[RMDB]
RNA sequence: GGGAACGACUCGAGUAGAGUCGAAAAGAUAUGGAUCCGAUUCAGGGAGCUGGAUGGUCGGAAACGACCAUUCAGCUUUGAUCUGACGGUCGGAUCCUAAGUCAAAAGAUGCGGUUCGCCGCAUCAACAAGUACAUUCUCUUCGGAGAAUGUACUUGAAAAGAAACAACAACAACAAC
Reactivity to DMS in 0.01 (KOAc 150mM, MgCl2 10mM, bicine 150mM(pH8.5), 24C), signal-to-noise 7, nucleotides 027 to 126: g020a030u000a300u010g010g000a000u000c000c000g010a050u000u010c000a010g010g000g000a020g010c000u000g000g000a000u000g000g010u000c000g000g000a110a110a220c010g010a010c000c000a020u000u010c010a010g010c010u000u000u000g000a080u010c010u000g010a050c300g020g010u000c010g000g000a010u000c000c000u010a010a050g000u000c050a080a050a160a150g010a020u000g010c000g000g000u000u010c290g030c010c000g020c010a010u000c010a070a200

Source: RMDB library TTRDES, as collected in RNAgym. Structure probing data (DMS) for a 177-nucleotide construct. The DMS profile rests on 7,658 reads. The RNA was probed in 150 mM KOAc, 10 mM MgCl2 and 150 mM bicine (pH 8.5) at 24 C. For DMS the reverse transcriptase was MarathonRT.